[RMDB]
RNA sequence: GGGAACGACUCGAGUAGAGUCGAAAAGAUAUGGAAUCAGGUAGGGAGCUGACUCGGAAACGAGCAGCAUCGAUCUAUAUGAUUCCUAAGUCAAAUCCCAGGUCUGUGUUCGCACAGACCUGGGAAACUACAAAGAAUGCUUCGGCAUUCUUUGUAGAAAAGAAACAACAACAACAAC
Reactivity to 2A3 in 0.01 (KOAc 150mM, MgCl2 10mM, bicine 150mM(pH8.5), 24C), signal-to-noise 1, nucleotides 027 to 126: g000a010u000a010u080g000g000a000a000u010c000a000g110g000u020a020g080g290g000a020g030c000u020g250a300c000u020c000g050g040a090a060a010c000g000a000g000c010a000g000c000a040u110c010g020a070u070c000u010a010u000a020u050g000a000u010u000c000c010u010a070a000g040u030c020a020a050a230u050c000c000c030a010g000g000u000c000u010g000u010g030u030u130c200g090c120a000c010a010g000a000c000c000u020g010g000g000a010a010a010
Reactivity to DMS in 0.01 (KOAc 150mM, MgCl2 10mM, bicine 150mM(pH8.5), 24C), signal-to-noise 1, nucleotides 027 to 126: g010a010u000a290u000g000g000a020a000u020c020a010g020g040u000a000g030g030g010a050g020c010u000g000a100c000u020c000g000g000a080a030a130c000g020a000g000c000a020g000c020a060u000c080g010a070u000c000u010a020u000a060u000g010a000u000u000c000c000u010a020a130g000u000c010a070a130a130u000c020c000c000a030g010g010u000c000u000g040u000g030u010u000c250g030c000a000c000a010g010a000c000c000u010g000g020g010a000a010a080